An RNA of 177 nucleotides, treated with DMS and 2A3 and read out base by base. Conditions: 150 mM KOAc, 10 mM MgCl2 and 150 mM bicine (pH 8.5), 24 C. DMS adducts were read by reverse transcription with MarathonRT. The data come from the RNA Mapping Database (RMDB), library OK2TST.

[RMDB]
RNA sequence: GGGAACGACUCGAGUAGAGUCGAAAAUGCCGGGCAGUUCGCCAAGCCGCGUUCAUCUGACAUGGAAACGAAGGACGGUGUCGAGCUUCCAUCCUACCGUGGCGAUAUCAUCAACGGUAUCGAGUUAUAUUAAAUUACCUUUCGAGGUAAUUUAAUAAAAAGAAACAACAACAACAAC
Reactivity to DMS in 0.01 (KOAc 150mM, MgCl2 10mM, bicine 150mM(pH8.5), 24C), signal-to-noise 9, nucleotides 027 to 126: u010g020c070c040g010g010g020c100a090g010u000u000c040g010c060c070a120a160g010c040c040g020c050g010u000u000c080a090u010c050u000g010a100c150a070u010g010g010a060a070a060c070g010a090a090g010g010a130c050g010g000u000g010u000c030g010a080g010c030u000u000c020c020a100u000c040c030u010a090c090c060g020u000g010g010c020g010a030u000a020u000c030a100u010c230a100a100c140g000g000u000a020u000c020g000a140g000u000u010a100
Reactivity to 2A3 in 0.01 (KOAc 150mM, MgCl2 10mM, bicine 150mM(pH8.5), 24C), signal-to-noise 4, nucleotides 027 to 126: u070g020c010c010g000g040g010c030a020g020u050u030c010g000c030c010a040a020g030c030c010g000c020g040u020u030c020a100u020c040u090g100a170c070a200u190g030g030a090a090a020c040g010a090a050g060g030a030c040g040g050u050g030u060c010g000a000g010c000u040u010c010c000a070u030c000c010u030a100c020c030g070u080g080g000c010g000a010u010a000u040c040a010u050c030a030a070c080g010g000u010a030u020c020g010a030g040u170u100a160